The data come from the RNA Mapping Database (RMDB), library M2RFPK. This 207-nucleotide RNA was probed chemically with DMS and 2A3. The reactions ran in a buffer of 150 mM KOAc, 10 mM MgCl2 and 150 mM bicine (pH 8.5), at 24 C. The DMS profile rests on 4,524 reads. High DMS reactivity at an A or C suggests that its Watson-Crick edge is free.
RNA sequence: GGGAACGACUCGAGUAGAGUCGAAAACCUACUCAAUACGUCCUCGUCGUACAGAUCGGUAACAUGUUUUCCGAACAUCCGCGCUUGGGUAUACGAGUAUACACCUUACCCAACCCUCGCCAACGGGAGUGCAUCCACGAGUUCGCUCGUGGAUGAAUAUUAGGGUAAGCUUCGGCUUACCCUAAUAAAAAGAAACAACAACAACAAC
Reactivity to DMS in 0.01 (KOAc 150mM, MgCl2 10mM, bicine 150mM(pH8.5), 24C), signal-to-noise 2, nucleotides 027 to 156: c030c030u010a050c050u010c020a080a110u000a080c020g030u000c020c020u000c030g050u000c030g020u000a150c070a130g010a070u000c010g000g010u000a050a080c100a100u010g020u000u000u010u010c010c010g000a100a080c070a080u010c020c010g000c050g000c040u010u000g010g000g020u000a060u010a050c100g000a140g030u000a080u000a090c110a110c070c040u000u000a050c010c000c020a110a100c000c010c010u010c080g010c080c050a090a120c050g000g010g000a030g050u010g030c000a000u000c010c000a020c000g010a040g000u010u000c300g020c000u000c010g050u000g000g010a000u010g010a040a060
Reactivity to 2A3 in 0.01 (KOAc 150mM, MgCl2 10mM, bicine 150mM(pH8.5), 24C), signal-to-noise 4, nucleotides 027 to 156: c000c000u020a030c030u030c040a060a070u080a110c050g090u040c020c020u020c020g110u030c010g000u050a050c030a070g080a070u010c020g050g020u070a060a030c070a220u230g080u080u040u080u070c020c010g000a030a030c020a140u070c060c050g050c000g010c060u030u030g010g030g000u080a050u020a080c070g000a010g050u010a000u060a010c130a080c010c030u050u100a060c010c020c020a050a040c040c000c010u040c000g060c040c010a110a040c020g020g020g020a050g060u070g030c000a000u000c010c000a000c000g020a030g000u090u040c140g070c100u000c000g000u000g000g000a000u010g000a000a000